[RMDB]
RNA sequence: GGGAACGACUCGAGUAGAGUCGAAAAAGAAAGAGCGUAUUCGCGUCUUGACGUGAAUGAGCCUAGACUGUAGGCUCUAGUGGGAUAGUAACGCUCAGUCCCAAAACGCUAUUCCACAGUCAGUUAAUUGGAUCUGCUAAUUCGUUAGCAGAUCCAAAAAAGAAACAACAACAACAAC
Reactivity to DMS in 0.01 (KOAc 150mM, MgCl2 10mM, bicine 150mM(pH8.5), 24C), signal-to-noise 1, nucleotides 027 to 126: a060g000a130a050a030g000a000g010c000g010u010a130u000u000c000g020c000g010u000c070u000u000g010a030c000g040u000g000a010a020u000g010a010g020c010c000u000a120g000a070c140u020g000u010a030g000g010c030u000c000u000a010g040u000g010g000g000a000u000a040g000u000a110a060c030g020c010u000c030a090g000u000c000c000c000a070a030a080a110c240g020c000u000a000u000u000c000c000a030c000a070g000u000c070a040g020u000u000a040a240